[RMDB]
RNA sequence: GGGAACGACUCGAGUAGAGUCGAAAAUGUACAGCGAGUCGAGGACAUAGCCGACUUCAUCCAGCAGUGCGUCGUCGUUAGGGAGGCGUUCCCGGGCGCCUGCCAGCACUGCCUCAAAGCCACUGGCUUCGGCAACCGGUGUGCCGCCGACAUCCAGGUUACAAUUUAAGUUCGCUUAAAUUGUAACAAAAGAAACAACAACAACAAC
Reactivity to 2A3 in 0.01 (KOAc 150mM, MgCl2 10mM, bicine 150mM(pH8.5), 24C), signal-to-noise 7, nucleotides 027 to 156: u120g020u040a090c040a050g020c030g070a020g030u040c000g050a070g030g040a050c040a100u190a050g040c020c000g020a050c040u060u060c070a100u050c070c030a010g010c000a000g010u000g030c010g040u110c030g020u040c040g080u160u160a110g010g020g020a010g010g010c000g010u040u040c020c010c010g010g020g000c010g000c000c000u070g090c010c000a000g000c010a010c010u020g000c010c010u090c060a070a070a010g010c020c020a110c110u120g000g000c000u040u030c010g000g000c000a030a060c000c010g000g040u090g040u070g010c010c010g040c010c010g010a020c010a080u020c020c020a030g100
Reactivity to DMS in 0.01 (KOAc 150mM, MgCl2 10mM, bicine 150mM(pH8.5), 24C), signal-to-noise 3, nucleotides 027 to 156: u010g030u000a120c050a110g020c030g020a160g050u060c030g010a120g030g010a100c080a100u000a150g020c050c010g010a040c010u000u000c050a120u020c070c070a090g000c020a050g020u000g020c020g040u000c050g030u000c060g000u010u000a110g020g000g000a040g030g000c050g010u010u000c040c030c030g030g000g010c010g000c020c020u000g000c050c030a090g010c020a040c020u000g000c010c030u010c090a070a080a060g000c000c090a170c050u000g010g010c020u000u000c070g030g000c020a080a060c030c010g010g000u000g030u000g050c040c020g010c010c010g020a080c050a100u000c000c020a190g010